[RMDB]
RNA sequence: GGGAACGACUCGAGUAGAGUCGAAAAUGGGGGACCUGAUCCAACACCGCAGGACACAGGACCACAAGAUUGCCAAACAAUCCUUGCGACCCUUCUGCACCGUUUGCAACCGCUACUUCAAAACCCCCACGUUGAGAUCAUUCGUGAUCUCAACGUGAAAAGAAACAACAACAACAAC
Reactivity to 2A3 in 0.01 (KOAc 150mM, MgCl2 10mM, bicine 150mM(pH8.5), 24C), signal-to-noise 6, nucleotides 027 to 126: u090g030g000g000g020g090a050c000c010u020g000a040u020c000c020a030a050c030a040c050c040g040c060a050g010g040a000c060a000c010a090g020g040a070c030c010a030c020a030a020g040a080u030u110g060c080c040a050a040a050c020a020a080u030c020c030u020u050g010c010g040a080c010c000c000u050u030c000u030g000c010a030c030c030g040u040u110u080g020c010a020a020c000c030g020c020u060a030c010u080u060c040a040a070a110a140c000c000c000c000
Reactivity to DMS in 0.01 (KOAc 150mM, MgCl2 10mM, bicine 150mM(pH8.5), 24C), signal-to-noise 3, nucleotides 027 to 126: u030g010g000g000g030g040a090c040c020u000g010a240u000c050c050a080a090c090a100c070c030g010c070a060g000g000a020c110a060c070a030g020g000a300c060c020a050c040a020a060g000a070u000u000g030c080c130a110a120a180c100a070a020u000c050c030u000u000g000c070g000a060c070c010c020u000u020c020u000g000c040a020c050c010g000u000u000u030g010c050a110a050c040c000g000c030u050a020c050u000u000c110a050a030a060a140c050c000c010c030
The data come from the RNA Mapping Database (RMDB), library OK1LIB.
This 177-nucleotide RNA was probed chemically with 2A3 and DMS.
For DMS, 4,228 sequencing reads were counted.
Values cover nucleotides 27 to 126.
Conditions: 150 mM KOAc, 10 mM MgCl2 and 150 mM bicine (pH 8.5), 24 C.